The record gives the reactivity of an RNA of 177 nucleotides to DMS and 2A3. It was measured as part of the RMDB library OK2TRN. Conditions: 150 mM KOAc, 10 mM MgCl2 and 150 mM bicine (pH 8.5), 24 C. DMS adducts were read by reverse transcription with MarathonRT. For 2A3 the reverse transcriptase was SuperScript II with manganese.
[RMDB]
RNA sequence: GGGAACGACUCGAGUAGAGUCGAAAAUGUUGCCUUAAAGUCUUCUUUAGUAUUUAUAUCAACUGAAUUUAAUGGUUUAUAUAACGUAGGAAUAGGUUUCAUUACACCAUUUACAAUAAUUGGCAUAGCUACCAAUACGAUUCGUCGUAUUGGUAGCAAAAGAAACAACAACAACAAC
Reactivity to DMS in 0.01 (KOAc 150mM, MgCl2 10mM, bicine 150mM(pH8.5), 24C), signal-to-noise 2, nucleotides 027 to 126: u000g000u010u000g010c010c030u010u000a050a100a180g000u020c160u000u000c000u010u000u000a180g000u000a060u010u000u000a000u000a010u000c010a010a020c010u000g000a130a120u010u010u010a080a110u010g000g000u000u000u000a000u000a030u000a030a050c090g030u000a000g000g000a060a120u000a050g020g020u000u000u000c040a030u000u000a040c090a190c020c000a030u000u000u000a040c190a110a070u020a030a040u020u000g020g010c110a060u000a130
Reactivity to 2A3 in 0.01 (KOAc 150mM, MgCl2 10mM, bicine 150mM(pH8.5), 24C), signal-to-noise 1, nucleotides 027 to 126: u000g020u010u000g000c000c000u150u040a110a250a170g030u010c060u090u000c020u120u240u210a030g060u090a260u110u100u060a000u020a010u000c020a010a010c000u070g030a070a170u300u080u190a220a100u210g060g000u000u000u030a000u000a050u000a020a050c050g020u040a000g050g000a050a070u020a020g000g000u020u020u000c000a020u010u030a040c030a000c020c000a090u200u280u120a000c060a010a050u170a120a080u170u040g140g000c060a070u060a050